[RMDB]
RNA sequence: GGGAACGACUCGAGUAGAGUCGAAAACUCGGUAAACCCCACCCGGAGCAAGGCCAAGAGGAAGCCCUCGGGCUUCUGCGCAGGCGUUCGAGGGCGGCCCGUCCGAUGCCCGCGGGUAGGCCGCUAGCCAUUUCGUUCUGUUCGCAGAACGAAAUGGAAAAGAAACAACAACAACAAC
Reactivity to 2A3 in 0.01 (KOAc 150mM, MgCl2 10mM, bicine 150mM(pH8.5), 24C), signal-to-noise 3, nucleotides 027 to 126: c010u000c000g010g040u120a120a150a110c030c010c000c000a030c000c000c020g020g030a080g050c020a080a050g040g020c060c000a150a040g060a060g070g000a030a020g000c010c010c010u050c060g020g000g000c000u050u020c010u050g030c060g020c060a030g000g040c020g000u040u050c030g000a040g000g000g010c000g010g010c000c000c010g020u000c000c010g010a020u160g050c000c000c010g090c050g000g000g020u030a050g060g000c010c000g000c050u020a030g030
Reactivity to DMS in 0.01 (KOAc 150mM, MgCl2 10mM, bicine 150mM(pH8.5), 24C), signal-to-noise 2, nucleotides 027 to 126: c040u000c000g020g000u030a070a080a150c080c000c010c070a070c140c000c000g000g010a150g000c070a060a180g000g010c050c020a060a140g010a170g000g020a030a000g020c020c000c020u010c200g000g000g030c010u030u000c020u020g000c180g020c090a120g000g040c180g000u000u020c000g060a080g000g000g050c000g010g000c010c000c020g020u000c020c010g030a110u030g000c010c000c040g060c010g000g000g040u000a020g010g010c030c010g000c080u000a040g000